The record gives the reactivity of an RNA of 177 nucleotides to DMS and 2A3. The data come from the RNA Mapping Database (RMDB), library TTRDEL. For 2A3, 5,672 sequencing reads were counted. Reactivities are rounded to 0.1 and cut off at 0 and 3. Values cover nucleotides 27 to 126. DMS adducts were read by reverse transcription with MarathonRT. For DMS, 2,767 sequencing reads were counted. For 2A3 the reverse transcriptase was SuperScript II with manganese.

RNA sequence: GGGAACGACUCGAGUAGAGUCGAAAAGAUAUGGAACGGACAGCGACGAAGCCAUGGAACGCGUCGGAAACGACUAAGCCAUGGCAGAGCUGUGCGUUCCUAAGUCAAACUAGGGUUCGCCCUAGAACUUGAUAAGGUUCUUCGGAACCUUAUCAAGAAAAGAAACAACAACAACAAC
Reactivity to DMS in 0.01 (KOAc 150mM, MgCl2 10mM, bicine 150mM(pH8.5), 24C), signal-to-noise 3, nucleotides 027 to 126: g010a030u020a300u000g000g000a000a000c010g000g010a010c000a010g010c000g010a170c270g010a090a090g010c000c010a020u000g010g000a070a070c130g000c240g000u010c010g010g000a080a070a120c000g020a020c000u000a210a140g010c010c010a000u000g010g030c000a000g000a070g030c000u010g000u000g000c000g000u000u000c000c000u000a010a050g000u000c020a090a070a260c010u010a000g010g010g010u000u020c260g000c000c000c000u000a010g010a060a150
Reactivity to 2A3 in 0.01 (KOAc 150mM, MgCl2 10mM, bicine 150mM(pH8.5), 24C), signal-to-noise 3, nucleotides 027 to 126: g010a000u050a030u130g000g010a010a000c010g030g220a000c000a000g040c000g230a240c080g090a300a020g000c000c000a010u010g000g010a230a070c100g030c130g170u010c000g000g020a020a050a050c020g000a000c010u060a100a040g030c000c000a000u010g000g000c000a000g000a000g000c000u010g000u000g000c000g000u000u000c000c000u010a020a010g010u000c030a060a060a130c000u010a010g040g010g020u080u110c280g210c000c000c020u000a010g000a040a120